[RMDB]
RNA sequence: GGGAACGACUCGAGUAGAGUCGAAAAAGACGAGCCGGUACGCCGGCUCGUCAAGUGGCUCCGGUUCACGGCCAGCACCCCGCUGAGGCCGACCCGGAGCCACUCCGUACGUUACGACGUACGGAGAUGUUAUGUAAAUUUUCGAAUUUACAUAACAAAAAGAAACAACAACAACAAC
Reactivity to 2A3 in 0.01 (KOAc 150mM, MgCl2 10mM, bicine 150mM(pH8.5), 24C), signal-to-noise 4, nucleotides 027 to 126: a000g010a000c000g000a000g000c000c020g010g000u090a070c300g060c060c000g000g000c010u000c000g000u000c000a010a000g010u010g000g000c000u000c000c010g000g000u070u090c160a040c020g000g000c020c010a010g000c010a200c020c080c030c070g000c010u030g070a070g130g000c000c000g030a060c010c000c000g000g000a000g000c000c000a000c000u000c000c000g000u000a000c000g000u010u050a090c300g020a000c000g090u000a000c000g010g000a030g000a020
Reactivity to DMS in 0.01 (KOAc 150mM, MgCl2 10mM, bicine 150mM(pH8.5), 24C), signal-to-noise 5, nucleotides 027 to 126: a090g000a020c010g030a020g040c010c010g040g030u010a060c250g020c020c010g030g000c010u000c010g010u000c000a000a030g010u000g010g010c010u000c010c010g000g000u000u020c260a090c020g000g020c000c000a050g010c020a210c090c080c080c120g000c020u000g000a110g020g000c010c000g000a120c240c000c000g000g000a010g020c000c000a000c000u000c000c000g000u000a000c000g010u000u020a150c170g020a050c010g010u000a000c000g010g000a030g000a100